[RMDB]
RNA sequence: GGGAACGACUCGAGUAGAGUCGAAAAUUACUAGUCUGUGAUGAAUUGCUUUGACUUCUGACACCUCGUAUGAAAACUGCACGUGCAGUCUGAUUAUUUAGCAAGACUGAGGCUUAAAUUAAAUCAAAUCCAUGAGGACUUUCGAGUCCUCAUGGAUAAAAGAAACAACAACAACAAC
Reactivity to DMS in 0.01 (KOAc 150mM, MgCl2 10mM, bicine 150mM(pH8.5), 24C), signal-to-noise 1, nucleotides 027 to 126: u040u010a080c130u000a050g020u000c030u010g080u000g010a130u000g010a070a070u000u010g000c040u000u010u020g000a060c040u000u000c040u000g030a140c080a060c030c020u000c100g010u010a070u000g000a050a060a100a060c050u000g020c010a080c260g030u000g000c000a040g000u000c030u000g020a030u000u000a090u010u000u000a050g030c030a050a070g020a120c030u000g000a150g040g010c040u000u000a100a030a040u010u010a070a060a130u000c090a000a170